[RMDB]
RNA sequence: GGGAACGACUCGAGUAGAGUCGAAAACGCCGCAGGCGACGUGCUGUGGACCGACGUGAGCAUCACCUACCAGGGUUACUGCUCAGACUUCGGGCGGACCUGGAUCGUGGGGCGUGACCCGCAGCCACAUCCCUGGGCCAUUCGUGGCCCAGGGAUGAAAAGAAACAACAACAACAAC
Reactivity to 2A3 in 0.01 (KOAc 150mM, MgCl2 10mM, bicine 150mM(pH8.5), 24C), signal-to-noise 1, nucleotides 027 to 126: c040g060c020c040g220c160a150g120g000c050g010a070c050g160u160g020c010u010g030u040g000g030a020c000c050g070a020c020g020u050g020a050g130c070a110u140c010a030c000c010u130a210c010c010a030g050g000g000u090u110a060c010u050g000c000u030c010a040g090a140c070u120u200c080g010g050g000c000g010g030a060c010c000u050g000g000a040u060c070g120u070g000g030g020g020c000g000u030g010a060c000c000c000g000c010a000g000c000c010a040
Reactivity to DMS in 0.01 (KOAc 150mM, MgCl2 10mM, bicine 150mM(pH8.5), 24C), signal-to-noise 2, nucleotides 027 to 126: c130g000c010c000g000c120a190g020g030c020g000a030c140g030u040g020c010u000g020u000g000g010a170c080c040g000a030c040g000u000g000a030g040c030a160u010c190a040c000c020u000a300c100c180a050g000g000g000u000u090a060c050u000g000c000u000c000a080g000a080c130u000u020c120g010g000g000c030g000g140a090c000c010u010g020g000a240u010c220g000u000g000g000g000g000c000g000u030g000a150c020c010c030g000c000a140g000c040c010a160
The data come from the RNA Mapping Database (RMDB), library OK1LIB. Structure probing data (2A3 and DMS) for a 177-nucleotide construct. 2A3 adducts were read by reverse transcription with SuperScript II with manganese. For 2A3, 1,669 sequencing reads were counted. For DMS the reverse transcriptase was MarathonRT. Conditions: 150 mM KOAc, 10 mM MgCl2 and 150 mM bicine (pH 8.5), 24 C.